This 207-nucleotide RNA was probed chemically with DMS and 2A3.
DMS adducts were read by reverse transcription with MarathonRT.
DMS (dimethyl sulfate) methylates the pairing face of unpaired adenines and cytosines.

RNA sequence: GGGAACGACUCGAGUAGAGUCGAAAACACAACUGUCCCUACUUCGUCGAUGCUAAAACAGUAAGAGAAGACAGCAUAAGGGUCAGGGGGUGAAGCUACGGUAAUUCCUGCCUCUUGCUCAUACUCAAUAACCUCAGCAUAAUCAUAAAUGAUCGCAGAUAUCACCGCUAUUCGUAGCGGUGAUAUCAAAAGAAACAACAACAACAAC
Reactivity to DMS in 0.01 (KOAc 150mM, MgCl2 10mM, bicine 150mM(pH8.5), 24C), signal-to-noise 2, nucleotides 027 to 156: c070a100c050a120a040c050u010g010u000c010c000c020u000a100c090u000u010c040g000u000c060g000a220u000g010c040u000a130a110a130a130c040a100g000u000a020a090g030a120g010a140a110g000a120c080a040g010c020a100u010a090a070g020g030g030u000c020a110g010g020g040g010g030u010g000a170a120g030c070u000a070c060g050g010u010a120a150u020u000c020c030u000g000c000c020u010c020u000u000g030c050u000c010a100u020a070c020u030c010a050a100u010a070a080c050c010u020c040a080g000c060a070u000a090a040u000c080a140u010a010a060a110u000g010a050u000c070g000c110a130
Reactivity to 2A3 in 0.01 (KOAc 150mM, MgCl2 10mM, bicine 150mM(pH8.5), 24C), signal-to-noise 5, nucleotides 027 to 156: c090a000c020a060a080c050u070g020u080c010c000c000u030a050c020u050u060c010g220u030c020g050a050u170g020c060u160a040a020a100a160c060a060g070u050a150a020g030a010g060a130a010g020a040c040a020g040c020a040u040a160a070g020g000g000u030c020a010g000g000g010g010g020u050g050a080a010g030c050u060a060c060g030g010u030a060a090u090u070c010c020u020g020c030c000u030c000u060u060g030c010u020c040a050u110a180c020u040c060a020a150u100a110a090c010c020u080c030a000g040c040a070u090a180a040u140c050a050u100a150a210a070u200g070a050u110c000g010c070a030